Chemical mapping of a 177-nucleotide RNA with 2A3 and DMS.
The data come from the RNA Mapping Database (RMDB), library OK2TRN.

RNA sequence: GGGAACGACUCGAGUAGAGUCGAAAACGUGAUUUAUCCUCUGGACAAUUUGAGGACGCGGUUACAGGUGUCAACGAAGAGGGACAACAGAGGGAUUUUGGCCUUGUUGGAGGAGAUCCUUCACAAAUCGUACAGUAAGCUUCGGCUUACUGUACGAAAAAGAAACAACAACAACAAC
Reactivity to 2A3 in 0.01 (KOAc 150mM, MgCl2 10mM, bicine 150mM(pH8.5), 24C), signal-to-noise 2, nucleotides 027 to 126: c030g020u060g070a070u050u140u230a080u100c020c000u000c020u130g000g090a040c030a110a190u150u010u120g030a060g020g030a000c030g030c030g070g030u130u100a060c080a060g110g040u060g110u090c020a070a060c060g060a040a090g070a030g070g040g030a030c040a040a010c010a060g000a010g000g040g020a030u050u090u100u100g090g000c000c010u110u150g120u150u170g050g000a000g000g000a080g000a060u020c000c000u060u050c020a060c000a050a110a030
Reactivity to DMS in 0.01 (KOAc 150mM, MgCl2 10mM, bicine 150mM(pH8.5), 24C), signal-to-noise 3, nucleotides 027 to 126: c110g040u000g020a110u020u000u000a070u000c020c000u000c010u000g000g030a070c130a080a160u010u000u010g020a070g010g030a040c030g020c030g020g000u010u010a100c200a150g000g000u000g010u000c030a030a060c060g020a040a040g000a220g020g000g000a040c130a040a070c080a050g000a020g000g020g000a300u000u010u010u000g000g010c070c050u010u020g010u000u010g000g000a060g000g010a180g010a060u010c020c020u000u020c040a070c160a060a060a080